[RMDB]
Chemical mapping of a 177-nucleotide RNA with DMS.
Reactivities are given for positions 27 through 126.
DMS adducts were read by reverse transcription with MarathonRT.
The DMS profile rests on 797 reads.
The RNA was probed in 150 mM KOAc, 10 mM MgCl2 and 150 mM bicine (pH 8.5) at 24 C.

RNA sequence: GGGAACGACUCGAGUAGAGUCGAAAAGAUAUGGAAUGCUGGGAGCUCGACGGUCCAUCGAUCUUGAGCUAUCGGAAACGAUAGCUCAAGGGAGGACCCAAGAGCGAAGAACAGCAUUCCUAAGUCACUCAAUACCGUUGUUCGCAACGGUAUUGAGAAAAGAAACAACAACAACAAC
Reactivity to DMS in 0.01 (KOAc 150mM, MgCl2 10mM, bicine 150mM(pH8.5), 24C), signal-to-noise 1, nucleotides 027 to 126: g000a030u000a300u000g040g020a000a000u000g010c000u000g000g000g040a150g000c030u030c000g010a300c300g000g000u030c000c000a300u020c180g000a020u030c000u020u000g000a020g000c000u000a000u000c000g010g000a120a140a230c000g010a040u000a000g040c000u000c030a000a010g030g000g000a080g010g000a040c000c000c020a020a200g030a000g020c000g030a150a090g000a090a140c000a040g000c000a020u000u000c010c010u000a030a070g000u000c020a270